Annotation:
The data come from the RNA Mapping Database (RMDB), library OK2TRN. The record gives the reactivity of an RNA of 177 nucleotides to 2A3 and DMS. Conditions: 150 mM KOAc, 10 mM MgCl2 and 150 mM bicine (pH 8.5), 24 C. DMS adducts were read by reverse transcription with MarathonRT. For DMS, 1,793 sequencing reads were counted. The 2A3 profile rests on 1,012 reads. 2A3 adducts were read by reverse transcription with SuperScript II with manganese.
RNA sequence: GGGAACGACUCGAGUAGAGUCGAAAACCAAGGAUUCAGGUAUGCCGUGCUUUGCGAGAUAAUCAGGUGAGGCGACCAAUACUAUUUCCUUGCUUUGCCCCAGUUUUCGCAUAUUGAGUAAUGAAUCUCUCUCCAGUACUUUCGAGUACUGGAGAGAAAAAGAAACAACAACAACAAC
Reactivity to 2A3 in 0.01 (KOAc 150mM, MgCl2 10mM, bicine 150mM(pH8.5), 24C), signal-to-noise 2, nucleotides 027 to 126: c010c000a000a030g060g000a030u110u130c200a120g050g000u120a020u140g100c050c060g100u180g070c020u110u070u010g040c020g030a080g080a220u190a240a160u220c060a030g110g000u020g020a000g050g000c000g000a030c040c040a030a000u090a100c070u050a170u060u100u050c000c000u010u020g000c040u100u040u130g000c070c000c000c010a070g030u010u030u080u120c040g000c070a020u070a120u220u200g040a100g050u160a160a060u100g070a080a120u040c040
Reactivity to DMS in 0.01 (KOAc 150mM, MgCl2 10mM, bicine 150mM(pH8.5), 24C), signal-to-noise 3, nucleotides 027 to 126: c100c000a110a060g010g010a060u000u000c110a100g010g010u000a060u010g030c080c080g020u000g000c060u000u010u000g010c080g010a150g010a120u000a030a100u000c120a090g020g010u000g000a090g010g010c010g020a020c070c150a130a020u010a040c120u010a090u000u000u010c010c050u010u000g000c120u000u000u010g010c080c010c020c080a140g000u000u000u000u000c060g010c080a030u000a070u010u010g000a060g000u000a040a140u010g010a120a120u010c100